[RMDB]
RNA sequence: GGGAACGACUCGAGUAGAGUCGAAAAGAUAUGGAAUGGUCAUAGGCAAGUUGGUGUUUCGGAAACGAAACUCAAUGAUGACCCUAUGAGCCAUUCCUAAGUCAAAACGCGGACUUCGGUCCGCGAAGCUUUGUUUCUACUUCGGUAGAAACAAAGCAAAAGAAACAACAACAACAAC
Reactivity to 2A3 in 0.01 (KOAc 150mM, MgCl2 10mM, bicine 150mM(pH8.5), 24C), signal-to-noise 1, nucleotides 027 to 126: g040a000u040a060u130g020g010a010a010u000g020g000u030c000a000u010a000g000g080c070a130a190g040u000u000g000g190u180g070u100u000u030c030g000g000a000a090a010c020g020a000a000a010c000u000c010a010a030u160g090a300u050g040a040c000c000c000u020a030u020g020a010g120c000c000a000u010u000c000c000u000a070a000g050u000c040a020a000a010a290c000g000c010g000g030a000c000u040u150c300g100g050u010c020c020g000c030g010a020a000
Reactivity to DMS in 0.01 (KOAc 150mM, MgCl2 10mM, bicine 150mM(pH8.5), 24C), signal-to-noise 1, nucleotides 027 to 126: g040a060u000a300u000g020g000a000a000u000g000g020u000c020a040u000a000g000g000c030a040a030g020u000u000g000g000u040g000u000u000u030c000g020g000a180a120a200c020g040a000a000a010c000u010c000a050a000u000g000a060u000g000a130c300c000c000u010a000u020g000a140g090c000c000a000u000u000c000c000u030a000a060g000u010c050a090a000a060a210c080g010c020g000g040a000c000u000u010c260g010g000u000c000c000g000c000g020a010a090
An RNA of 177 nucleotides, treated with 2A3 and DMS and read out base by base. For 2A3, 1,946 sequencing reads were counted. 2A3 adducts were read by reverse transcription with SuperScript II with manganese. Values are in units of 0.01, from 0 to 300, in steps of 10.